[RMDB]
RNA sequence: GGGAACGACUCGAGUAGAGUCGAAAAUAAUCGCGCGAAAAUCACGUGAAAUAAUCAGAGGAAUCGUUUGAAAUCAUCGUAGUAAUCGCGCGAAAAUCGCGUGAAAUAAUCAGAGGAAUCGUUUGAACAUUAGUUAUUCCUUCGGGAAUAACUAAUGAAAAGAAACAACAACAACAAC
Reactivity to DMS in 0.01 (KOAc 150mM, MgCl2 10mM, bicine 150mM(pH8.5), 24C), signal-to-noise 4, nucleotides 027 to 126: u020a110a190u010c000g030c000g020c010g000a020a050a200a110u010c060a000c020g010u000g000a040a130a110u010a080a070u000c050a110g010a030g010g030a140a110u010c040g010u000u010u000g000a070a140a150u000c020a030u010c040g000u010a040g010u010a080a230u000c000g010c000g010c010g010a020a030a060a090u000c050g020c030g030u000g000a050a120a090u000a090a070u000c050a070g020a070g000g000a060a060u010c060g010u000u000u000g000a100a190
Reactivity to 2A3 in 0.01 (KOAc 150mM, MgCl2 10mM, bicine 150mM(pH8.5), 24C), signal-to-noise 4, nucleotides 027 to 126: u130a020a080u010c000g010c000g000c000g010a030a000a010a050u060c000a010c020g000u010g030a050a040a020u150a020a050u080c060a040g040a030g110g110a110a170u110c060g140u060u120u130g080a050a070a010u010c020a010u080c030g000u000a030g000u010a080a030u000c010g000c000g010c000g000a000a000a010a010u020c010g000c010g030u050g070a060a030a050u100a030a080u110c060a020g030a060g110g070a070a050u070c040g080u060u090u130g050a040a000
An RNA of 177 nucleotides, treated with DMS and 2A3 and read out base by base. The 2A3 profile rests on 3,780 reads. Conditions: 150 mM KOAc, 10 mM MgCl2 and 150 mM bicine (pH 8.5), 24 C. Reactivities are given for positions 27 through 126.